The record gives the reactivity of an RNA of 177 nucleotides to 2A3 and DMS. The reactions ran in a buffer of 150 mM KOAc, 10 mM MgCl2 and 150 mM bicine (pH 8.5), at 24 C. Reactivities are given for positions 27 through 126. DMS adducts were read by reverse transcription with MarathonRT. For DMS, 3,054 sequencing reads were counted.
RNA sequence: GGGAACGACUCGAGUAGAGUCGAAAAAAGAGAGAGAAAACAUGAACUAAUCCUCACCUUUAAAAUUCAAAAUCAAUGGCUCAGAUUUUGGAUGGAGAGGGGAUGGAGAGAAGCUGGAUGGAGAGGACACGCUUUACCAUUUCGAUGGUAAAGCGUGAAAAGAAACAACAACAACAAC
Reactivity to 2A3 in 0.01 (KOAc 150mM, MgCl2 10mM, bicine 150mM(pH8.5), 24C), signal-to-noise 4, nucleotides 027 to 126: a000a000g060a010g000a000g000a010g000a010a030a030a010c040a050u090g050a070a020c030u060a050a060u020c010c000u050c080a110c020c000u020u040u040a020a080a040a020u000u020c000a000a010a000a020u000c050a010a130u120g110g010c040u070c090a040g000a050u000u010u020u010g010g020a000u010g000g000a080g010a020g040g000g010g000a010u150g020g000a030g000a000g000a030a010g030c030u020g010g020a040u030g050g020a050g010a020g040g030a000
Reactivity to DMS in 0.01 (KOAc 150mM, MgCl2 10mM, bicine 150mM(pH8.5), 24C), signal-to-noise 2, nucleotides 027 to 126: a060a040g010a010g010a060g020a030g000a030a020a000a070c070a010u000g030a080a210c160u000a070a060u000c010c010u030c060a250c030c010u030u010u000a030a180a080a030u000u000c010a000a000a000a000u000c010a050a060u020g010g000c030u050c030a100g000a000u000u000u000u000g000g000a010u000g000g000a300g000a000g000g000g010g000a060u020g000g020a000g010a040g020a080a070g000c040u010g000g000a040u010g000g010a080g030a040g000g020a240